Structure probing data (DMS and 2A3) for a 177-nucleotide construct.
The RNA was probed in 150 mM KOAc, 10 mM MgCl2 and 150 mM bicine (pH 8.5) at 24 C.
Source: RMDB library OK1LIB, as collected in RNAgym.
For DMS the reverse transcriptase was MarathonRT.
[RMDB]
RNA sequence: GGGAACGACUCGAGUAGAGUCGAAAAUGUAAAUCGCCUGCUGCCAGACUUAACAUGCCGCUGAAAGCUUCGUGAAAGCUUUUCUGUUAAGUAAGCAAGCGAAUGUAACAGGAAAAUGCGGGCUAGACAUAGGGCUGGGAUUCGUCCCAGCCCUAUGAAAAGAAACAACAACAACAAC
Reactivity to DMS in 0.01 (KOAc 150mM, MgCl2 10mM, bicine 150mM(pH8.5), 24C), signal-to-noise 3, nucleotides 027 to 126: u020g000u010a020a120a100u000c020g020c000c020u000g030c000u000g010c100c160a140g010a060c020u000u010a000a010c030a060u000g010c100c020g030c070u000g000a010a020a010g000c020u000u000c100g020u030g010a120a000a020g000c020u000u000u000u010c040u010g000u000u000a000a000g000u000a090a030g000c020a000a080g000c010g020a040a050u000g010u030a090a040c090a080g000g000a090a060a070a100u050g030c020g000g000g000c060u020a060g010a300
Reactivity to 2A3 in 0.01 (KOAc 150mM, MgCl2 10mM, bicine 150mM(pH8.5), 24C), signal-to-noise 3, nucleotides 027 to 126: u150g030u070a070a010a090u050c070g000c000c000u000g000c030u070g070c000c080a170g060a090c030u000u000a020a000c000a090u140g100c090c080g060c150u060g030a020a020a020g010c000u040u050c040g300u140g200a150a000a000g000c000u000u070u020u010c020u000g000u010u000a000a000g000u010a080a020g000c040a080a000g050c010g060a000a000u080g010u060a090a060c050a120g020g100a010a150a040a060u130g040c010g000g040g000c000u050a040g000a060